Structure probing data (DMS and 2A3) for a 177-nucleotide construct. Values cover nucleotides 27 to 126. 2A3 adducts were read by reverse transcription with SuperScript II with manganese. The reactions ran in a buffer of 150 mM KOAc, 10 mM MgCl2 and 150 mM bicine (pH 8.5), at 24 C. The data come from the RNA Mapping Database (RMDB), library OK2TRN.
RNA sequence: GGGAACGACUCGAGUAGAGUCGAAAAGCAAUGUGGCUCAGCUCAUCCUACAAGCUUCAUAGAGAACUGAGACUGGCCUGGAAGCAUAGCCAGAAAUUAGAACGCCUAAGGGAAGAAGGUCACAACGCCCAGAGAUAUAGUUCGCUAUAUCUCUGGGAAAAGAAACAACAACAACAAC
Reactivity to DMS in 0.01 (KOAc 150mM, MgCl2 10mM, bicine 150mM(pH8.5), 24C), signal-to-noise 4, nucleotides 027 to 126: g010c060a070a100u010g040u000g000g000c010u010c060a150g030c030u000c050a150u010c030c010u000a090c200a160a130g000c010u000u000c040a120u010a090g000a160g000a070a140c080u000g010a050g000a190c000u000g010g000c010c050u010g000g010a160a130g010c070a040u010a110g000c010c010a040g000a050a050a110u000u000a100g010a030a100c150g000c040c020u010a100a110g010g000g000a020a040g010a070a070g000g000u000c030a020c050a050a110c300g000
Reactivity to 2A3 in 0.01 (KOAc 150mM, MgCl2 10mM, bicine 150mM(pH8.5), 24C), signal-to-noise 6, nucleotides 027 to 126: g040c020a030a120u070g000u020g020g010c020u030c140a050g030c030u020c020a100u010c020c000u060a060c050a050a030g010c010u040u030c040a070u120a130g130a000g050a220a090c090u100g020a020g070a130c010u010g020g000c010c010u050g040g080a060a000g060c070a070u120a030g000c010c010a010g040a040a110a010u100u090a050g020a070a020c080g030c010c010u030a060a040g050g000g000a030a020g020a020a010g020g000u010c000a000c010a070a100c050g010